RNA sequence: GGGAACGACUCGAGUAGAGUCGAAAACAAACUGCUCAGACAGAGCUCCUGGGCAUUUUCCAAUAGGAAGCUGGAGCUGAGGUGACCUAACUUCCUUAUGUCCUAACUUCCCCCAGACAAAAGAUGUUUAAGCCUCAAAUUUGGAACUGGAAAGGAACACUAGGAGUAUGUUCGCAUACUCCUAGUGAAAAGAAACAACAACAACAAC
Reactivity to 2A3 in 0.01 (KOAc 150mM, MgCl2 10mM, bicine 150mM(pH8.5), 24C), signal-to-noise 3, nucleotides 027 to 156: c010a030a060a040c020u020g010c010u020c040a020g050a210c010a080g170a070g070c030u040c010c010u010g010g000g020c000a030u030u000u100u060c100c020a130a100u100a080g010g000a020a020g000c050u040g010g020a040g000c020u040g020a010g000g040u040g070a020c000c030u050a050a020c020u040u060c010c000u100u040a100u160g050u000c040c030u060a190a220c110u130u020c010c000c010c010c020a010g010a010c010a000a170a000a000g030a010u040g060u060u150u040a060a020g020c000c000u060c030a020a080a030u090u050u020g040g000a070a020c040u040g020g080a120a050a030g060g250a030a010
Reactivity to DMS in 0.01 (KOAc 150mM, MgCl2 10mM, bicine 150mM(pH8.5), 24C), signal-to-noise 2, nucleotides 027 to 156: c030a040a060a060c080u000g000c010u010c010a040g020a120c010a230g000a120g020c050u010c090c020u010g020g020g030c010a160u000u010u010u010c030c010a080a110u040a080g010g030a050a030g030c010u020g000g000a110g030c040u000g010a100g030g010u010g010a170c060c010u000a040a030c040u000u000c010c010u000u020a110u000g030u000c010c010u000a050a080c050u000u000c010c010c030c040c100a130g000a080c040a050a110a120a140g010a090u000g010u000u000u000a060a100g020c000c000u000c030a040a100a150u000u000u000g010g010a040a100c040u010g050g010a040a050a040g050g000a130a240